Structure probing data (DMS) for a 177-nucleotide construct. DMS adducts were read by reverse transcription with MarathonRT. The DMS profile rests on 972 reads.
RNA sequence: GGGAACGACUCGAGUAGAGUCGAAAAAAGAUAUGGACGAACGGGAGACUUAAGGACACUAUAAUCCUAAGUCGGAAACGACUUAGGGUAGUGUCCGGAGGUCUUUGAUCGUUCGUCCUAAGUCAAAGUUAUUCCCCUUCUUCGGAAGGGGAAUAACAAAAGAAACAACAACAACAAC
Reactivity to DMS in 0.01 (KOAc 150mM, MgCl2 10mM, bicine 150mM(pH8.5), 24C), signal-to-noise 2, nucleotides 027 to 126: a110a060g030a040u020a300u000g010g000a030c000g000a020a000c000g020g000g000a030g030a000c000u000u000a300a220g010g000a000c000a000c000u030a100u050a300a190u020c000c000u000a020a000g000u020c010g020g000a050a140a180c010g040a000c000u000u000a010g000g000g010u000a000g010u000g000u000c000c010g000g030a110g000g000u000c020u010u020u010g000a150u010c010g010u030u000c000g010u010c000c000u000a020a040g010u000c020a200a120a130